[RMDB]
RNA sequence: GGGAACGACUCGAGUAGAGUCGAAAAUUUGUCGAUAUUGGGGUACAUCAAGAUGGCUUAGUGCAUAUUUCAAUGCUGUCUGACAGUUUUGUGGAAGACCCUCACAAAGUAGUUAAAACAGGCGAUGCGUAGACAGAGAGUUCGCUCUCUGUCUACGAAAAGAAACAACAACAACAAC
Reactivity to DMS in 0.01 (KOAc 150mM, MgCl2 10mM, bicine 150mM(pH8.5), 24C), signal-to-noise 3, nucleotides 027 to 126: u000u000u000g020u010c040g020a100u010a070u000u010g000g020g010g010u010a060c080a090u000c050a050a050g000a140u000g010g000c030u000u010a080g000u000g000c090a060u000a090u010u000u010c110a040a020u000g010c060u000g000u000c050u010g000a070c070a210g010u000u000u000u000g020u000g010g000a040a060g000a070c050c010c030u000c050a010c050a030a030a060g000u000a060g010u000u000a050a070a060a080c100a050g010g010c060g000a080u000g000
Reactivity to 2A3 in 0.01 (KOAc 150mM, MgCl2 10mM, bicine 150mM(pH8.5), 24C), signal-to-noise 2, nucleotides 027 to 126: u010u060u060g030u030c030g000a040u040a110u140u160g010g010g030g000u060a050c010a080u040c060a120a020g050a080u090g030g000c010u050u100a060g050u060g080c050a060u040a120u130u170u150c030a040a020u050g020c060u040g050u040c020u020g050a010c020a010g010u000u080u060u110g060u020g020g030a050a050g080a090c000c000c000u090c010a000c010a000a070a010g060u080a030g030u080u120a050a150a070a080c020a000g040g010c040g030a030u060g030
The record gives the reactivity of an RNA of 177 nucleotides to DMS and 2A3. Source: RMDB library OK2TST, as collected in RNAgym. 2A3 adducts were read by reverse transcription with SuperScript II with manganese. The reactions ran in a buffer of 150 mM KOAc, 10 mM MgCl2 and 150 mM bicine (pH 8.5), at 24 C. For DMS the reverse transcriptase was MarathonRT.